Chemical mapping of a 177-nucleotide RNA with DMS and 2A3. For DMS, 1,630 sequencing reads were counted.
[RMDB]
RNA sequence: GGGAACGACUCGAGUAGAGUCGAAAAAUGGUCUCGAACCUGACUUCAAGUUCUUAAAGACUGAAGACCCCAGACAGCAGACAGAGCUGGAUGGAGCUGUCAUGCCUGAGGAUGGGGGUGUGGGCAGGGCUGACCUAAUAUUCGUAUUAGGUCAGCCAAAAGAAACAACAACAACAAC
Reactivity to DMS in 0.01 (KOAc 150mM, MgCl2 10mM, bicine 150mM(pH8.5), 24C), signal-to-noise 2, nucleotides 027 to 126: a100u010g000g010u000c020u010c120g000a100a090c060c020u000g010a160c030u010u000c040a080a060g010u000u000c040u000u010a080a150a160g010a020c030u030g010a040a070g000a240c020c000c000c010a050g000a160c080a080g000c030a090g000a070c120a030g000a050g030c010u000g010g010a120u010g000g000a100g020c010u000g030u000c020a210u000g000c030c040u000g000a100g010g010a140u000g010g010g000g000g010u020g020u010g000g000g040c060a130g010
Reactivity to 2A3 in 0.01 (KOAc 150mM, MgCl2 10mM, bicine 150mM(pH8.5), 24C), signal-to-noise 2, nucleotides 027 to 126: a000u060g050g000u020c030u040c110g020a110a070c000c000u050g090a120c020u030u010c070a110a080g030u070u040c010u100u300a200a150a030g020a050c030u030g000a010a000g060a060c030c000c030c000a020g030a090c030a020g000c000a020g030a060c020a000g060a020g100c080u090g000g080a130u270g060g040a050g060c000u020g000u000c000a200u060g000c020c050u000g030a080g120g020a070u050g020g000g020g010g090u000g010u080g000g050g030c030a110g060